Chemical mapping of a 177-nucleotide RNA with 2A3 and DMS.

[RMDB]
RNA sequence: GGGAACGACUCGAGUAGAGUCGAAAAUGUUCCGGAUUCGUCCGGAACAAAAUAUGGCACCGGUACUCGACGAUACAAUGCCACGGAGAUGGACCGGGUGAAAAACCACUUAGUUCGCUAAGUGGAAGUGCAGUAGAAGAUUCGUCUUCUACUGCACAAAAGAAACAACAACAACAAC
Reactivity to 2A3 in 0.01 (KOAc 150mM, MgCl2 10mM, bicine 150mM(pH8.5), 24C), signal-to-noise 3, nucleotides 027 to 126: u030g000u020u010c010c000g000g000a050u050u050c160g060u000c000c000g010g000a000a000c000a010a010a000a010u130a030u030g100g000c040a010c070c030g030g000u000a010c020u010c020g010a010c010g010a030u080a240c090a190a220u190g070c020c000a020c020g030g000a040g000a030u030g010g040a010c000c010g000g020g020u070g050a060a030a000a020a010c000c000a000c000u000u010a010g020u060u060c210g010c150u000a000a000g010u000g000g010a020a010
Reactivity to DMS in 0.01 (KOAc 150mM, MgCl2 10mM, bicine 150mM(pH8.5), 24C), signal-to-noise 4, nucleotides 027 to 126: u000g010u000u010c010c000g010g010a020u000u000c190g020u000c000c000g010g010a010a000c000a010a030a080a080u010a080u010g010g010c050a100c010c000g010g000u000a030c040u000c010g000a120c000g010a160u020a090c190a070a090u000g000c200c180a070c010g000g000a090g000a040u000g000g000a010c020c000g010g020g000u010g000a050a060a070a140a140c010c000a030c000u000u000a010g010u000u010c250g000c000u000a000a000g010u010g000g020a020a050

It was measured as part of the RMDB library M2PK50. In probing experiments dimethyl sulfate is read out at A N1 and C N3, which are open when not base-paired. The DMS profile rests on 4,221 reads.